[RMDB]
RNA sequence: GGGAACGACUCGAGUAGAGUCGAAAACUUUUUGUAAUGAAUGAGUUCAUUACAGGAAAGCAUGCUCAUCACUUAAAAUGCAUUGCCAAGUGGUAGAUUUAAGACAGUUUCUGGAGACCAAAACUGUGGAACUAGUGAUCGAAUUCUUAAUCAUCCAAUGGUAGGAGUGAUUCGUCACUCCUACCAUAAAAGAAACAACAACAACAAC
Reactivity to DMS in 0.01 (KOAc 150mM, MgCl2 10mM, bicine 150mM(pH8.5), 24C), signal-to-noise 1, nucleotides 027 to 156: c010u000u000u000u000u000g000u000a030a030u000g050a140a060u000g000a240g010u000u000c030a010u000u000a030c000a000g000g020a000a020a060g080c030a140u000g000c000u000c030a100u000c080a100c120u030u010a040a060a070a090u020g010c060a060u000u000g030c040c050a050a200g030u010g010g040u000a030g030a130u000u000u000a080a090g000a090c060a030g030u000u000u020c000u050g000g010a190g030a300c090c060a040a000a110a050c030u000g000u010g010g030a070a120c090u000a090g010u010g000a030u000c030g000a050a050u000u000c050u000u000a010a090u000c080a170u000c030c060a070
Reactivity to 2A3 in 0.01 (KOAc 150mM, MgCl2 10mM, bicine 150mM(pH8.5), 24C), signal-to-noise 2, nucleotides 027 to 156: c000u000u000u010u010u020g000u020a000a020u030g000a010a020u120g050a090g160u010u010c010a000u000u000a010c000a010g060g020a040a030a010g030c080a060u140g000c020u040c070a060u060c000a020c020u050u190a020a080a140a040u100g010c030a040u070u140g010c040c010a080a070g030u020g090g010u040a080g030a120u100u150u000a020a020g020a020c010a010g000u050u040u000c090u090g070g030a090g080a180c060c040a050a050a020a020c040u030g010u030g080g000a040a020c030u000a040g050u030g100a050u070c050g030a020a080u050u000c000u040u150a070a090u020c040a050u030c000c020a040

This 207-nucleotide RNA was probed chemically with DMS and 2A3.
2A3 adducts were read by reverse transcription with SuperScript II with manganese.
The DMS profile rests on 1,567 reads.
DMS adducts were read by reverse transcription with MarathonRT.
It was measured as part of the RMDB library OK3TST.
The 2A3 profile rests on 778 reads.